[RMDB]
Structure probing data (DMS and 2A3) for a 207-nucleotide construct. Reactivities are given for positions 27 through 156. 2A3 adducts were read by reverse transcription with SuperScript II with manganese. Conditions: 150 mM KOAc, 10 mM MgCl2 and 150 mM bicine (pH 8.5), 24 C. For DMS the reverse transcriptase was MarathonRT. The 2A3 profile rests on 1,172 reads.
RNA sequence: GGGAACGACUCGAGUAGAGUCGAAAAGGAGGCGGGAGAGUCCGUUCUGAAGUGUCCCGGCUAUAAUAAAUCGAUCUUUGCGGGCAGCCCGUUGGCAGGAGGCGUGAGGAAUCCGUCUCUCUGUCUGGUGCGGCAAGGUAGUUCUGGGUCCUUAGGGCUAUAUAAAGUUCUUCGGAACUUUAUAUAGAAAAGAAACAACAACAACAAC
Reactivity to DMS in 0.01 (KOAc 150mM, MgCl2 10mM, bicine 150mM(pH8.5), 24C), signal-to-noise 1, nucleotides 027 to 156: g020g000a070g020g020c060g020g080g010a110g000a130g000u010c030c040g030u000u000c100u000g020a110a110g000u010g010u000c000c000c020g030g030c060u000a070u000a060a100u000a050a130a140u000c060g020a120u010c070u000u000u000g050c040g010g050g030c030a130g020c010c000c070g040u000u000g040g000c030a060g000g000a040g010g000c010g000u010g010a060g020g020a150a160u000c020c000g010u000c020u000c000u000c010u000g000u000c020u000g040g020u000g000c050g040g000c000a040a050g010g010u000a050g020u010u010c020u000g000g010g010u000c020c020u000u000a070g030g020g010
Reactivity to 2A3 in 0.01 (KOAc 150mM, MgCl2 10mM, bicine 150mM(pH8.5), 24C), signal-to-noise 2, nucleotides 027 to 156: g070g010a020g010g040c040g010g030g000a110g010a020g080u070c060c030g010u070u040c040u030g070a100a050g060u090g030u160c010c010c000g030g020c060u100a090u060a280a130u190a210a150a060u100c060g080a030u050c010u050u060u130g040c020g000g050g020c040a020g030c000c010c030g110u160u180g000g000c020a000g000g010a010g000g000c020g040u240g060a050g020g200a070a110u020c000c000g020u000c000u000c000u000c000u000g000u020c020u030g030g020u100g020c030g020g000c010a000a010g050g000u030a010g100u040u050c050u070g000g010g010u030c010c000u030u080a050g000g000g050